About this RNA
Chemical mapping of a 177-nucleotide RNA with 2A3 and DMS. The DMS profile rests on 4,807 reads. Reactivities are given for positions 27 through 126. DMS adducts were read by reverse transcription with MarathonRT.
RNA sequence: GGGAACGACUCGAGUAGAGUCGAAAAGAUAUGGAUCAUUCUUUUGACGCAUAGUGCAGUCGGAAACGACUGCAGUGCGAUAAGAAUAUCCUAAGUCAAAAGGACAGUCCCUUCGGGGACUGUCCAAGAUGUUUUAUUAGUUCGCUAAUAAAACAUCAAAAGAAACAACAACAACAAC
Reactivity to 2A3 in 0.01 (KOAc 150mM, MgCl2 10mM, bicine 150mM(pH8.5), 24C), signal-to-noise 3, nucleotides 027 to 126: g010a010u090a030u170g010g010a030u050c040a010u110u010c010u140u180u080u200g250a160c030g010c010a020u090a130g300u130g030c010a000g000u000c020g000g040a070a080a070c020g010a010c000u030g000c000a000g000u000g000c010g000a010u020a050a010g000a000a000u000a000u000c010c000u010a120a040g080u040c040a070a040a050a150g000g000a010c010a000g000u000c000c010c020u000u070c240g060g000g000g010a000c010u000g000u010c010c010a010a010
Reactivity to DMS in 0.01 (KOAc 150mM, MgCl2 10mM, bicine 150mM(pH8.5), 24C), signal-to-noise 4, nucleotides 027 to 126: g010a040u010a300u020g010g010a010u000c150a020u000u000c000u000u000u010u000g020a210c090g010c000a010u000a100g030u010g000c000a010g010u000c000g010g010a110a090a180c000g010a010c000u000g010c000a030g010u000g010c000g010a140u000a010a010g000a010a010u000a030u000c000c000u010a060a150g010u000c020a060a050a120a140g000g000a010c000a010g000u000c000c000c000u000u010c220g030g020g010g000a000c010u010g000u000c000c000a010a030